An RNA of 177 nucleotides, treated with 2A3 and DMS and read out base by base.
[RMDB]
RNA sequence: GGGAACGACUCGAGUAGAGUCGAAAAGAUAUGGAUGAAGGCAACAGCCAUUGGAUCGGAAACGAUCCACGGUGGACAUGCCUUAUCCUAAGUCAAACCAGUAUGGCUGUUCGCAGCCAUACUGGAACUCACUUUUAUACUUCGGUAUAAAAGUGAGAAAAGAAACAACAACAACAAC
Reactivity to 2A3 in 0.01 (KOAc 150mM, MgCl2 10mM, bicine 150mM(pH8.5), 24C), signal-to-noise 4, nucleotides 027 to 126: g020a020u050a030u110g010g010a020u090g300a060a020g000g000c010a040a050c060a300g100c020c020a030u070u140g000g000a000u010c010g020g000a060a040a020c010g000a010u010c000c010a010c050g060g040u060g010g050a090c040a100u040g000c000c000u000u010a000u020c000c000u010a090a010g050u020c050a050a050a140c000c000a000g000u000a000u000g000g000c000u020g040u080u130c300g020c180a000g000c010c000a000u000a000c000u000g000g000a000a000
Reactivity to DMS in 0.01 (KOAc 150mM, MgCl2 10mM, bicine 150mM(pH8.5), 24C), signal-to-noise 7, nucleotides 027 to 126: g010a030u000a290u000g000g000a000u000g000a020a020g000g020c010a030a130c190a300g010c000c000a090u010u000g000g000a010u000c000g000g000a080a090a160c000g010a000u010c000c000a000c300g000g020u000g000g010a160c170a100u000g010c000c010u000u000a050u000c000c000u000a040a120g010u000c030a060a090a210c000c000a010g000u000a010u000g000g000c000u000g000u000u020c220g000c000a010g000c000c000a000u000a000c010u000g010g000a030a060

The data come from the RNA Mapping Database (RMDB), library TTRDEL. 2A3 adducts were read by reverse transcription with SuperScript II with manganese. For 2A3, 24,723 sequencing reads were counted.